[RMDB]
RNA sequence: GGGAACGACUCGAGUAGAGUCGAAAAGAUAUGGAACCGGCACCAGCAACAGCUCGGAAACGAGACAUGCUGUGUGCGCGGUUCCUAAGUCAAAACUGCAGAUAGACCUUCGGGUCUAUCUGCAGAACUAGACGUUAAACUUCGGUUUAACGUCUAGAAAAGAAACAACAACAACAAC
Reactivity to DMS in 0.01 (KOAc 150mM, MgCl2 10mM, bicine 150mM(pH8.5), 24C), signal-to-noise 3, nucleotides 027 to 126: g010a050u010a300u010g000g000a020a000c000c000g010g010c000a010c000c010a020g000c000a050a080c280a180g000c010u010c010g010g000a050a090a200c000g000a010g000a060c080a200u000g000c000u000g010u020g020u000g000c000g030c010g020g010u000u000c000c000u000a010a090g010u000c040a060a070a100a150c000u000g000c010a000g000a010u000a010g000a010c000c000u000u010c240g020g000g020u000c000u010a000u000c000u000g000c000a000g010a010a170
Reactivity to 2A3 in 0.01 (KOAc 150mM, MgCl2 10mM, bicine 150mM(pH8.5), 24C), signal-to-noise 2, nucleotides 027 to 126: g000a040u070a040u200g020g010a000a020c000c000g030g020c000a000c010c000a010g000c010a000a100c050a230g000c010u010c020g010g060a110a070a050c020g000a000g040a050c060a040u100g000c010u020g120u130g010u010g190c020g010c010g030g020u010u000c030c000u010a010a000g010u010c010a020a000a090a160c010u000g020c030a000g010a030u000a020g010a000c010c010u060u190c300g000g020g010u020c010u000a010u000c010u000g000c000a000g000a000a000

Chemical mapping of a 177-nucleotide RNA with DMS and 2A3. The 2A3 profile rests on 3,706 reads. The DMS profile rests on 3,057 reads.